[RMDB]
RNA sequence: GGGAACGACUCGAGUAGAGUCGAAAACGACGCAGGUUCGCCUGCGUCGCACUACCGAGAAUGCGACUCGGUUUAUUAAAACGCGCCUUGGAAACAAGGCAAAUAAGGCCAGAUUCGUCUGGCCUAAAGAUCGUUUUGUAUUCGUACAAAACGAUCUAAAAGAAACAACAACAACAAC
Reactivity to 2A3 in 0.01 (KOAc 150mM, MgCl2 10mM, bicine 150mM(pH8.5), 24C), signal-to-noise 2, nucleotides 027 to 126: c010g020a010c000g010c000a000g000g010u060u090c110g140c070c000u010g000c010g010u000c000g020c000a030c010u010a000c010c010g020a000g010a060a130u160g000c010g040a040c010u000c010g010g000u030u130u020a030u010u060a000a010a000a000c020g040c010g000c000c010u010u010g010g010a020a010a020c010a020a000g040g010c020a020a020a000u070a000a000g000g000c020c010a020g010a030u030u050c080g100u020c090u000g000g010c000c000u000a000a000
Reactivity to DMS in 0.01 (KOAc 150mM, MgCl2 10mM, bicine 150mM(pH8.5), 24C), signal-to-noise 2, nucleotides 027 to 126: c010g010a010c010g020c000a010g010g000u000u010c190g010c000c000u000g000c010g010u000c000g000c050a080c010u000a040c000c000g000a000g020a020a100u010g020c030g000a050c000u000c000g010g010u000u000u010a020u010u020a010a010a020a030c030g030c050g020c000c000u010u000g000g000a120a140a200c010a010a020g000g010c030a020a020a070u030a120a050g010g010c010c000a020g000a050u000u020c220g000u000c000u000g000g000c000c000u000a010a040